[RMDB]
RNA sequence: GGGAACGACUCGAGUAGAGUCGAAAACAAAGGGCUAAACUCUAGGAGUAAGGAUGAACUAGAAAAUACCAUUUUUCACAAAGACUGAAGUGGAGCUUUGAAUCAGCUCAACCUUAGCAGGAUUAAUGUGAUCUGUCCUUCACCACCUGCCAAAAGACUGGACUCAAAAUUUCGAUUUUGAGUCCAGAAAAGAAACAACAACAACAAC
Reactivity to DMS in 0.01 (KOAc 150mM, MgCl2 10mM, bicine 150mM(pH8.5), 24C), signal-to-noise 1, nucleotides 027 to 156: c060a060a080a130g020g020g010c020u000a050a080a170c030u000c040u010a130g030g010a110g040u010a070a040g010g020a140u000g030a030a060c060u010a080g010a090a060a070a150u010a170c030c060a130u000u000u000u000u000c030a130c060a080a130a120g010a120c060u000g000a030a050g030u000g010g030a060g030c020u000u000u000g000a160a250u010c230a050g000c000u010c000a000a010c010c050u050u000a050g050c040a120g010g000a080u000u000a030a070u000g010u010g010a030u020c030u000g000u000c020c040u000u000c080a030c040c030a060c010c000u000g060c060c040a020a060a090a130g010a170
Reactivity to 2A3 in 0.01 (KOAc 150mM, MgCl2 10mM, bicine 150mM(pH8.5), 24C), signal-to-noise 3, nucleotides 027 to 156: c030a010a060a040g060g020g000c030u110a080a030a040c030u020c050u080a030g000g030a040g030u050a050a020g030g010a030u070g030a050a020c060u080a080g080a020a070a010a010u090a080c020c000a030u060u030u020u100u050c070a070c010a120a110a030g040a070c030u040g020a030a010g050u050g070g020a010g000c020u090u060u170g070a050a070u130c030a010g000c000u010c030a020a030c010c030u040u060a010g020c010a010g020g030a010u010u160a080a060u140g020u030g020a010u030c030u050g050u050c030c000u010u010c020a030c010c010a090c000c000u010g000c010c000a000a090a000a110g010a020